[RMDB]
RNA sequence: GGGAACGACUCGAGUAGAGUCGAAAAGAUAUGGACCUUGACGAAGGAUGAACUACGUAUGGUGUCGGAAACGACACCCAUACGCAUCUGGAAAGGUCCUAAGUCAAAACGACCCUUCGGGGUCGAACAUUUUUGCGUACUUCGGUACGCAAAAAUGAAAAGAAACAACAACAACAAC
Reactivity to DMS in 0.01 (KOAc 150mM, MgCl2 10mM, bicine 150mM(pH8.5), 24C), signal-to-noise 1, nucleotides 027 to 126: g000a140u000a300u010g000g000a020c000c000u000u000g010a300c150g100a260a150g020g060a040u000g020a240a120c130u020a300c020g040u010a000u000g000g000u000g000u000c000g000g000a130a040a210c020g000a060c000a000c130c090c110a000u000a000c000g000c010a020u000c020u000g000g010a070a020a020g010g000u000c000c000u000a020a070g010u000c000a120a080a090a300c000g010a020c000c000c000u000u020c150g010g000g000g070u000c000g000a040a120